[RMDB]
RNA sequence: GGGAACGACUCGAGUAGAGUCGAAAAGAUAUGGAAUAUCCACAUGAGCUUUGAUCUCGGAAACGAGGGAGCUCUGUGGAGUAUUCCUAAGUCAAAAUCUGUGGCUGAGUUCGCUCAGCCACAGAAACCUAAUUAAUCAGUUCGCUGAUUAAUUAGGAAAAGAAACAACAACAACAAC
Reactivity to DMS in 0.01 (KOAc 150mM, MgCl2 10mM, bicine 150mM(pH8.5), 24C), signal-to-noise 2, nucleotides 027 to 126: g010a010u010a300u010g000g000a010a020u000a010u000c000c000a000c000a020u010g010a010g010c000u000u000u000g010a070u000c000u000c000g010g000a090a110a220c010g000a020g010g000g010a010g010c000u000c000u000g010u000g000g000a020g000u000a000u000u000c000c010u000a040a140g010u000c030a130a090a090a110u000c000u000g020u000g010g000c000u010g000a030g010u000u010c260g010c010u000c000a000g030c000c000a000c000a000g000a000a060a090
Reactivity to 2A3 in 0.01 (KOAc 150mM, MgCl2 10mM, bicine 150mM(pH8.5), 24C), signal-to-noise 3, nucleotides 027 to 126: g000a020u070a060u140g000g000a000a000u010a000u020c000c000a000c000a060u300g000a000g020c030u300u300u140g080a120u130c000u010c010g000g000a080a100a030c010g010a000g000g010g000a000g000c010u000c000u000g020u030g000g000a010g010u010a010u000u000c000c010u020a090a020g050u020c030a040a020a040a300u030c000u010g000u000g000g000c020u020g000a010g020u070u130c230g060c120u000c000a000g030c040c000a000c020a010g000a000a000a000
Chemical mapping of a 177-nucleotide RNA with DMS and 2A3. It was measured as part of the RMDB library TTRDEL. DMS adducts were read by reverse transcription with MarathonRT.